This 177-nucleotide RNA was probed chemically with 2A3 and DMS. For 2A3 the reverse transcriptase was SuperScript II with manganese. Values cover nucleotides 27 to 126. Source: RMDB library 15KREP, as collected in RNAgym. The 2A3 profile rests on 4,220 reads. The reactions ran in a buffer of 150 mM KOAc, 10 mM MgCl2 and 150 mM bicine (pH 8.5), at 24 C. DMS adducts were read by reverse transcription with MarathonRT. For DMS, 5,550 sequencing reads were counted.
RNA sequence: GGGAACGACUCGAGUAGAGUCGAAAAAGAAGGACGCGAGACGCAAACCUGUGAGUGGAUCCUCGCCUUUAUUCACUGGGGACGACAACUCUGGGGAGAAAAGGGAGGAUCGGAUGGGAAGAGUAUACGAUAUACCUAACUUCGGUUAGGUAUAUCGAAAAGAAACAACAACAACAAC
Reactivity to 2A3 in 0.01 (KOAc 150mM, MgCl2 10mM, bicine 150mM(pH8.5), 24C), signal-to-noise 4, nucleotides 027 to 126: a000g070a020a010g030g020a010c030g040c030g060a060g020a050c020g010c050a040a060a070c020c030u060g040u070g090a050g040u100g050g000a000u010c000c010u000c050g300c020c000u050u050u010a070u040u040c080a080c230u010g000g020g000g060a090c080g050a050c080a130a060c020u010c020u010g030g000g020g000a040g040a010a030a000a000g020g000g000a020g000g000a010u010c000g000g020a050u030g030g020g010a060a050g030a030g100u070a050u020a150
Reactivity to DMS in 0.01 (KOAc 150mM, MgCl2 10mM, bicine 150mM(pH8.5), 24C), signal-to-noise 4, nucleotides 027 to 126: a070g010a140a020g000g010a060c090g020c050g010a050g000a070c070g020c070a060a100a090c040c020u010g000u000g000a080g020u010g000g000a040u000c000c000u000c010g000c010c010u010u010u000a120u010u000c020a050c020u000g010g000g000g000a110c110g010a140c300a090a090c000u000c000u000g000g000g000g000a040g000a050a030a020a030g000g010g000a030g010g010a000u000c010g000g000a070u010g000g000g000a060a060g000a080g010u000a090u010a140